[RMDB]
An RNA of 207 nucleotides, treated with 2A3 and read out base by base.

RNA sequence: GGGAACGACUCGAGUAGAGUCGAAAAUCAGCAGGAAAGAAAUGGAAGGGAAUUCAUGAUGGCAAGUACUGGUGAUGAAAUUAUGCCUAAACUGAAUUUAUUUCCCAAAUUCCAGAAUAGGCUAAUCCAUCCUUUCUGCUAAAGGAAGCUGAAUACACACGGGAUAUCCAUUCGUGGAUAUCCCGUGAAAAGAAACAACAACAACAAC
Reactivity to 2A3 in 0.01 (KOAc 150mM, MgCl2 10mM, bicine 150mM(pH8.5), 24C), signal-to-noise 2, nucleotides 027 to 156: u050c000a000g020c010a010g030g010a050a040a010g030a040a040a080u100g020g040a020a010g070g010g030a030a100u150u060c030a090u070g050a030u040g020g000c050a100a040g030u090a050c060u050g030g060u050g010a060u020g020a090a000a040u200u010a120u210g020c020c020u040a050a020a040c030u010g000a010a010u000u020u040a090u040u070u110c000c000c000a010a000a000u030u030c110c050a000g030a040a080u080a040g000g000c030u050a100a050u120c060c030a020u020c000c010u000u060u010c030u050g040c080u120a070a040a020g010g010a040a010g000c020u100g000a090a030u250a020c260a100
The data come from the RNA Mapping Database (RMDB), library OK3TST.